[RMDB]
RNA sequence: GGGAACGACUCGAGUAGAGUCGAAAAGCGCAGCACAAGGCUUGCAGCAUUAGUUGCAGCAAGUUUUGCCAUUUUGCUUCAGCUUGCUUUUAGUUGCUUGCUUCAGCGCGCGCAGGCAGGCUUCAGCUUCACACAAGGCGCUUAGAGGCAGGCGCCAUACAGGCAAAAAGUUCGCUUUUUGCCUGUAAAAAGAAACAACAACAACAAC
Reactivity to 2A3 in 0.01 (KOAc 150mM, MgCl2 10mM, bicine 150mM(pH8.5), 24C), signal-to-noise 1, nucleotides 027 to 156: g020c020g030c060a020g000c020a030c010a070a010g030g000c000u000u000g000c020a020g010c020a030u060u200a150g210u300u070g000c010a010g010c000a020a000g000u020u010u040u030g050c060c030a210u190u180u060u070g000c010u040u030c040a050g010c020u050u050g020c040u020u050u050u150a090g030u080u210g000c020u040u040g010c000u000u050c030a040g040c000g000c010g010c050g020c090a010g070g000c040a010g060g020c000u130u100c080a030g000c040u070u050c060a040c000a000c020a070a090g080g000c010g010c010u040u090a070g000a030g050g000c000a020g010g010c000g000c020c000a020
Reactivity to DMS in 0.01 (KOAc 150mM, MgCl2 10mM, bicine 150mM(pH8.5), 24C), signal-to-noise 1, nucleotides 027 to 156: g000c030g010c070a080g020c080a060c020a040a040g010g030c000u000u010g030c010a100g040c020a050u000u010a080g030u000u010g060c050a100g030c000a010a020g000u000u000u000u000g000c010c070a300u000u010u000u000g000c000u020u000c080a160g020c060u000u000g010c020u000u000u000u000a080g010u020u000g020c010u000u000g030c000u000u000c040a110g030c060g040c050g000c120g020c080a030g010g010c090a020g010g010c030u010u000c100a190g020c020u000u000c060a000c070a100c120a110a060g000g020c000g030c060u000u000a080g000a120g030g030c030a060g000g050c020g000c040c030a230